[RMDB]
RNA sequence: GGGAACGACUCGAGUAGAGUCGAAAACAGAUCUCGAGAGGGAUUUGGUAUAUCACAAGGUAUAAGAGGCUCCAAGUACAGAUGGGUCGAAAUAAGACGGAGCCCAGGCUAGUUGGGUUAUACGGGAGUAUUCCAGCAAUGCUGGACCAUCGUACAAGGACGGAUAAAUAUUCGUAUUUAUCCGUCCAAAAGAAACAACAACAACAAC
Reactivity to 2A3 in 0.01 (KOAc 150mM, MgCl2 10mM, bicine 150mM(pH8.5), 24C), signal-to-noise 2, nucleotides 027 to 156: c000a010g040a050u020c000u000c000g120a100g020a060g030g010g010a000u040u000u030g000g020u130a090u050a030u200c080a040c040a120a070g040g040u080a140u050a150a060g050a030g010g000c000u000c010c030a070a030g020u000a040c020a030g010a010u010g000g010g010u010c030g040a030a070a070u200a030a020g010a010c040g000g000a000g000c040c000c000a000g000g010c020u020a000g020u030u000g010g010g000u130u030a020u000a040c020g030g000g020a110g030u000a000u030u050c000c000a000g000c030a100a010u200g000c000u000g000g010a000c000c000a010u000c010g000u010a010c020a040a090
Reactivity to DMS in 0.01 (KOAc 150mM, MgCl2 10mM, bicine 150mM(pH8.5), 24C), signal-to-noise 1, nucleotides 027 to 156: c020a080g010a070u000c000u020c000g010a280g010a300g000g010g000a080u000u000u000g050g000u000a030u000a070u000c040a080c060a060a160g000g000u010a060u000a030a060g020a130g000g040c020u010c010c060a130a060g020u010a090c020a180g040a080u000g020g010g000u000c040g010a120a100a080u010a040a080g010a070c120g000g000a120g020c020c010c040a100g010g000c030u010a260g000u000u000g000g000g020u000u000a010u010a100c030g010g000g020a200g000u000a070u000u000c000c000a000g000c010a060a060u000g000c010u000g000g030a060c080c030a020u000c010g030u000a040c110a100a300
This 207-nucleotide RNA was probed chemically with 2A3 and DMS.
The 2A3 profile rests on 1,275 reads.
The DMS profile rests on 1,868 reads.
Reactivities are given for positions 27 through 156.
The reactions ran in a buffer of 150 mM KOAc, 10 mM MgCl2 and 150 mM bicine (pH 8.5), at 24 C.
For DMS the reverse transcriptase was MarathonRT.